This 177-nucleotide RNA was probed chemically with DMS and 2A3.
For 2A3, 6,757 sequencing reads were counted.

RNA sequence: GGGAACGACUCGAGUAGAGUCGAAAAUAUUAUAGCGCACUAAAGACGCUGAUCUUUAGUUACCAAGGAACUUUAGUGCUGAGGUCCGAGUUCCUAGGUCCCAUGUCGGACCUUAGCACUAAUUGAAUUCAAGAAAAUGAUUCGUCAUUUUCUUGAAAAAAGAAACAACAACAACAAC
Reactivity to DMS in 0.01 (KOAc 150mM, MgCl2 10mM, bicine 150mM(pH8.5), 24C), signal-to-noise 6, nucleotides 027 to 126: u010a070u010u010a110u010a090g020c080g020c150a080c010u000a010a020a010g000a030c030g020c210u010g000a090u000c010u000u000u000a020g010u000u000a080c080c070a090a130g010g000a100a090c070u000u000u000a010g000u000g010c010u000g000a000g010g010u000c000c000g000a050g010u000u010c080c060u000a080g020g010u010c010c000c010a130u010g010u000c000g010g000a010c000c000u000u000a000g010c000a010c010u000a000a000u000u000g010a100a120
Reactivity to 2A3 in 0.01 (KOAc 150mM, MgCl2 10mM, bicine 150mM(pH8.5), 24C), signal-to-noise 5, nucleotides 027 to 126: u140a030u160u220a120u170a160g090c040g000c030a020c040u020a020a000a000g020a010c020g080c300u140g100a160u020c000u010u020u010a010g010u030u080a070c040c050a050a040g150g030a080a110c020u040u010u010a010g010u000g010c000u000g000a000g000g020u000c000c000g000a020g040u100u120c040c020u030a060g030g090u020c020c000c000a070u110g110u050c000g000g010a000c000c000u010u010a000g000c000a000c000u010a000a000u000u030g040a030a090